[RMDB]
RNA sequence: GGGAACGACUCGAGUAGAGUCGAAAAGCGCAACCUCACCGAGCUCAAUGACGGGGAGUUGGAUGAGUUCGCCCGGAUCUAUCUGGACGUGCUGCAGAGGUUUGAUCGGAUGUAUUCUUCACCGCUGCCCUGGAUGGAGAUUCGUCUCCAUCCAGGGAAAAGAAACAACAACAACAAC
Reactivity to 2A3 in 0.01 (KOAc 150mM, MgCl2 10mM, bicine 150mM(pH8.5), 24C), signal-to-noise 4, nucleotides 027 to 126: g020c030g000c040a050a020c000c010u030c010a060c010c070g020a000g050c010u020c050a090a140u230g060a110c060g040g010g000g040a040g020u100u110g040g040a160u110g020a000g020u060u020c030g040c020c010c010g020g020a050u010c020u080a090u040c030u070g030g010a000c040g090u040g050c010u010g010c030a020g010a040g110g000u040u090u110g110a110u050c020g040g010a050u060g040u100a130u090u070c020u060u090c030a060c050c000g070c040u100g070
Reactivity to DMS in 0.01 (KOAc 150mM, MgCl2 10mM, bicine 150mM(pH8.5), 24C), signal-to-noise 2, nucleotides 027 to 126: g010c040g020c050a120a050c050c040u030c060a250c070c000g000a120g000c090u010c130a020a050u000g010a080c050g000g040g020g000a090g030u000u030g000g020a130u010g000a070g010u000u000c070g030c050c000c000g020g000a030u020c050u010a070u000c030u000g000g000a020c060g010u000g000c040u000g010c000a080g060a110g000g020u000u020u100g000a070u000c080g010g000a100u000g010u000a140u050u000c040u000u000c110a030c000c080g000c070u010g000